The record gives the reactivity of an RNA of 177 nucleotides to DMS and 2A3. The RNA was probed in 150 mM KOAc, 10 mM MgCl2 and 150 mM bicine (pH 8.5) at 24 C. Source: RMDB library OK1LIB, as collected in RNAgym. As a SHAPE reagent, 2A3 marks flexible, mostly unpaired nucleotides at the ribose 2'-OH. For DMS the reverse transcriptase was MarathonRT.
RNA sequence: GGGAACGACUCGAGUAGAGUCGAAAACGGCGGUCCUUGGACUAACAGCCCCAAAUCCGGCCAGUAGGUUUCUUGGCUGUUUUGCUGUUGGCAUGGGGGCGUCCCAUAGCUGGUAGGUCCGUUUUGGCGAUAAAUAAUAUUUCGAUAUUAUUUAUCGAAAAGAAACAACAACAACAAC
Reactivity to DMS in 0.01 (KOAc 150mM, MgCl2 10mM, bicine 150mM(pH8.5), 24C), signal-to-noise 7, nucleotides 027 to 126: c080g000g000c040g010g000u000c010c000u010u010g010g000a110c040u000a060a060c000a070g010c010c240c070c080a070a070a070u030c170c050g010g000c010c010a040g010u010a090g010g020u010u020u010c030u020u010g010g010c010u000g000u000u020u010u010g010c020u000g000u000u000g010g020c080a070u010g000g010g000g010g000c060g010u020c000c000c010a080u020a070g010c030u010g010g010u020a040g000g010u000c010c010g000u010u000u020u010g010g000
Reactivity to 2A3 in 0.01 (KOAc 150mM, MgCl2 10mM, bicine 150mM(pH8.5), 24C), signal-to-noise 2, nucleotides 027 to 126: c010g010g000c000g010g050u020c000c000u010u060g090g020a050c010u010a030a000c000a000g010c000c000c000c020a020a070a020u050c030c010g030g000c010c020a030g050u080a060g110g160u070u100u050c050u060u060g010g000c010u010g030u020u050u040u060g000c000u000g000u050u020g010g000c020a030u040g010g000g000g040g060c030g050u090c000c000c010a020u040a010g050c050u060g070g030u060a040g000g040u020c010c010g000u020u010u070u080g060g010